[RMDB]
RNA sequence: GGGAACGACUCGAGUAGAGUCGAAAACAAACGAUGAGUCACCCAUGAUCGUGCGGCUUGCCUUUGACACCGUUGAGAAGAUCGUGCGUGAGCACUUUGACUACAUCACAGAGACAGAGGUCACCACACGGAUAAAGGCUUUCGAGCCUUUAUCCGUAAAAGAAACAACAACAACAAC
Reactivity to DMS in 0.01 (KOAc 150mM, MgCl2 10mM, bicine 150mM(pH8.5), 24C), signal-to-noise 1, nucleotides 027 to 126: c140a110a130a070c100g010a090u010g000a090g030u010c060a130c070c010c000a180u020g040a050u010c040g030u000g000c100g010g020c050u000u010g010c000c000u020u000u000g000a050c000a060c000c030g020u000u000g000a090g000a070a210g000a020u000c070g040u000g000c090g010u010g000a260g000c030a010c020u010u000u040g020a080c030u000a040c070a060u000c070a030c020a080g010a200g000a040c110a010g000a060g040g000u000c300a110c030c010a060c120
Reactivity to 2A3 in 0.01 (KOAc 150mM, MgCl2 10mM, bicine 150mM(pH8.5), 24C), signal-to-noise 1, nucleotides 027 to 126: c020a010a110a000c120g120a110u250g020a010g020u030c010a050c000c000c020a000u070g070a050u060c050g020u040g030c000g010g030c090u100u120g060c000c100u010u080u130g050a010c050a010c010c030g040u010u160g020a060g020a250a080g020a070u070c050g000u040g020c060g000u040g030a020g000c010a060c000u080u090u040g070a050c050u050a060c030a090u100c030a000c010a070g060a000g010a020c010a010g040a030g070g000u040c010a020c060c000a050c000
This 177-nucleotide RNA was probed chemically with DMS and 2A3. The data come from the RNA Mapping Database (RMDB), library OK2TRN. Conditions: 150 mM KOAc, 10 mM MgCl2 and 150 mM bicine (pH 8.5), 24 C.